[RMDB]
RNA sequence: GGGAACGACUCGAGUAGAGUCGAAAAUUAUAUCUAGCAGACAAUUUGACUGCUGAUGAAACAAAGGCGCUUAAAGAGUUAUAUGGCCCCGUUGAUCCUACUUUCUUACACAGAUUCUAUUCACUUAUCCGAUGGGGGUUCGCCCCCAUCAAAAGAAACAACAACAACAAC
Reactivity to 2A3 in 0.01 (KOAc 150mM, MgCl2 10mM, bicine 150mM(pH8.5), 24C), signal-to-noise 4, nucleotides 027 to 129: u010u020a050u000a000u100c110u190a000g000c000a000g040a140c060a210a290u140u110u170g070a110c040u000g040c000u000g000a000u060g000a000a020a020c080a030a110a070g010g000c000g000c090u030u120a060a110a010g120a010g000u100u040a090u050a090u270g040g000c000c000c000c000g000u000u040g010a060u020c000c000u040a070c030u110u160u000c010u020u100a080c150a000c010a050g020a100u070u030c020u050a080u120u070c030a040c120u110u100a090u070c010c000
Reactivity to DMS in 0.01 (KOAc 150mM, MgCl2 10mM, bicine 150mM(pH8.5), 24C), signal-to-noise 5, nucleotides 027 to 129: u000u000a050u040a050u020c010u060a040g070c000a000g010a100c030a070a210u110u000u050g010a100c010u040g000c010u000g020a030u030g000a110a130a240c180a140a170a120g000g000c150g020c040u040u050a000a000a000g010a150g050u060u030a060u040a110u070g010g020c000c000c000c050g040u030u000g020a060u020c060c010u020a040c070u000u000u000c030u020u000a070c170a120c110a130g020a050u030u030c010u040a060u090u000c050a100c080u020u050a080u020c140c050